[RMDB]
RNA sequence: GGGAACGACUCGAGUAGAGUCGAAAACCCAGUUCCGGGGCGGUUCACUGGAUCCGAAGCCUCUAGAAGGAUAAUAUAGGCACUCCAUACCCUACUCCGACUCAAUACGUCCCCGUCGUACAGAAUGCAAGGGCAUCCCUGUUCGCAGGGAUGCCAACAAGUUUAUAGUGUUCGCACUAUAAACUUGAAAAGAAACAACAACAACAAC
Reactivity to DMS in 0.01 (KOAc 150mM, MgCl2 10mM, bicine 150mM(pH8.5), 24C), signal-to-noise 1, nucleotides 027 to 156: c010c020c000a140g030u000u000c070c010g030g000g030g030c090g000g020u010u010c020a130c100u000g030g000a050u000c030c010g010a200a260g000c000c000u010c020u020a080g010a160a070g010g010a130u000a110a130u010a170u000a140g000g040c020a080c080u030c040c010a150u000a090c030c010c010u010a040c030u000c020c040g000a060c010u000c040a050a150u010a080c030g000u000c000c030c000c050g000u010c070g040u000a180c050a090g000a090a180u010g000c080a050a110g000g020g000c000a000u000c000c000c000u000g010u000u010c230g030c020a040g090g020g010a010u020g000c010c020a000a030
Reactivity to 2A3 in 0.01 (KOAc 150mM, MgCl2 10mM, bicine 150mM(pH8.5), 24C), signal-to-noise 2, nucleotides 027 to 156: c000c000c010a000g060u100u020c030c000g000g030g000g000c030g000g010u080u080c050a020c060u050g040g010a040u140c040c030g040a050a020g010c010c020u030c030u040a130g130a260a070g100g010a050u050a230a100u120a100u080a150g040g000c030a000c090u040c020c000a040u030a060c000c000c000u040a050c040u040c050c010g060a050c030u020c110a060a070u080a130c030g040u100c020c010c010c000g050u060c000g010u050a080c030a100g140a170a020u110g060c060a050a030g060g000g010c000a000u000c000c000c000u020g020u040u060c140g000c060a000g000g010g020a000u000g000c000c000a000a000